Notes: This 177-nucleotide RNA was probed chemically with 2A3 and DMS. For 2A3, 9,655 sequencing reads were counted. For DMS the reverse transcriptase was MarathonRT.
RNA sequence: GGGAACGACUCGAGUAGAGUCGAAAAGAUAUGGAAGGUAGGGAGAUCUUGGAUCGGAAACGAUCCAAAGGAUCAUCGAUCUACUUCCUAAGUCAAACCUUCACGCAUGUUCGCAUGCGUGAAGGAACCAGUAAUUGGAGUUCGCUCCAAUUACUGGAAAAGAAACAACAACAACAAC
Reactivity to 2A3 in 0.01 (KOAc 150mM, MgCl2 10mM, bicine 150mM(pH8.5), 24C), signal-to-noise 4, nucleotides 027 to 126: g010a030u050a020u100g020g020a020a040g250g070u130a000g000g040g000a050g000a000u020c020u030u040g010g010a000u010c010g010g030a030a060a030c010g000a000u000c010c020a020a050a010g100g000a040u040c020a060u270c030g020a030u020c010u000a000c000u010u000c010c000u010a100a010g040u010c040a080a050a180c000c000u000u000c000a000c010g020c000a000u010g050u070u080c300g020c220a000u000g020c010g000u000g000a000a000g000g010a000a020
Reactivity to DMS in 0.01 (KOAc 150mM, MgCl2 10mM, bicine 150mM(pH8.5), 24C), signal-to-noise 3, nucleotides 027 to 126: g000a020u000a300u010g000g000a020a010g020g000u000a010g000g000g000a090g000a020u000c010u000u000g000g000a010u000c000g000g000a080a070a130c010g010a000u000c000c000a010a020a070g020g000a020u000c080a210u000c130g000a150u000c000u000a040c000u000u010c000c000u000a050a100g000u000c010a130a130a150c000c000u000u000c000a000c000g010c000a000u000g000u010u010c190g010c000a010u000g020c000g020u000g000a000a010g010g020a030a030

For DMS, 3,749 sequencing reads were counted.
For 2A3 the reverse transcriptase was SuperScript II with manganese.